[RMDB]
RNA sequence: GGGAACGACUCGAGUAGAGUCGAAAAGAAUGAUCGGGACCUGCAGAUGCUGAAGGGGGAGAAGCUACAGGUCCUGAAGGGGUGAGGUUCCAGGACACCAUCCCCUGUCCCUGCAGGACCCCCCUCCAUCACAACUCAAAUUCGUUUGAGUUGUGAUAAAAGAAACAACAACAACAAC
Reactivity to 2A3 in 0.01 (KOAc 150mM, MgCl2 10mM, bicine 150mM(pH8.5), 24C), signal-to-noise 4, nucleotides 027 to 126: g070a050a130u260g030a080u100c060g000g030g030a060c000c000u010g000c030a030g060a140u110g050c090u160g120a100a110g000g010g000g040g010a060g030a060a020g000c030u060a060c050a090g060g040u010c010c000u020g020a020a030g020g030g000g000u080g060a070g060g020u090u010c040c010a010g010g020a000c020a020c040c020a050u040c000c000c000c000u000g010u030c010c020c010u010g020c020a020g020g020a090c010c010c010c010c000c010u010c010c000
Reactivity to DMS in 0.01 (KOAc 150mM, MgCl2 10mM, bicine 150mM(pH8.5), 24C), signal-to-noise 7, nucleotides 027 to 126: g000a120a100u010g010a100u010c090g020g010g010a090c010c010u010g000c010a020g000a070u010g010c170u000g020a180a130g000g000g010g010g000a040g010a130a110g020c120u000a070c190a100g000g000u000c010c000u000g010a040a050g000g010g000g020u000g010a080g010g000u000u000c050c040a040g000g000a030c030a090c090c050a230u000c000c000c000c030u000g010u000c020c040c020u000g000c030a030g010g000a190c010c000c000c010c000c000u000c030c050